[RMDB]
An RNA of 177 nucleotides, treated with DMS and 2A3 and read out base by base. Source: RMDB library TTRDES, as collected in RNAgym. The reactions ran in a buffer of 150 mM KOAc, 10 mM MgCl2 and 150 mM bicine (pH 8.5), at 24 C.

RNA sequence: GGGAACGACUCGAGUAGAGUCGAAAAGAUAUGGAGAUCGGUAGGGAGAUGUGGAUCGGAAACGAUCCAUACAUCAUCGAUCUACUCGAUCUCCUAAGUCAAAGUCUGAGCGUUCGCGCUCAGACAACCGUAGAUGAUAGUUCGCUAUCAUCUACGGAAAAGAAACAACAACAACAAC
Reactivity to DMS in 0.01 (KOAc 150mM, MgCl2 10mM, bicine 150mM(pH8.5), 24C), signal-to-noise 5, nucleotides 027 to 126: g000a020u000a300u000g010g000a030g020a010u000c020g010g000u010a010g010g010g010a300g020a020u010g060u010g000g000a020u000c010g000g020a090a080a160c010g010a010u000c010c010a060u010a060c230a070u020c070a140u000c110g000a300u010c010u000a010c000u010c010g050a000u000c000u000c000c010u000a000a050g010u000c040a120a140a120g000u000c000u000g000a010g020c000g000u000u010c300g030c000g030c000u000c010a010g000a010c010a010a050
Reactivity to 2A3 in 0.01 (KOAc 150mM, MgCl2 10mM, bicine 150mM(pH8.5), 24C), signal-to-noise 5, nucleotides 027 to 126: g030a020u050a030u150g000g010a000g000a010u010c000g010g010u010a010g050g070g060a230g000a030u010g020u050g040g000a000u000c000g010g020a050a050a010c010g010a000u000c010c000a020u150a160c080a080u190c000a010u270c060g080a100u000c010u010a010c020u030c010g010a000u000c000u000c000c000u000a010a000g010u000c040a120a010a010g000u000c000u000g000a010g010c030g040u090u190c300g030c010g020c150u000c000a000g000a000c000a000a000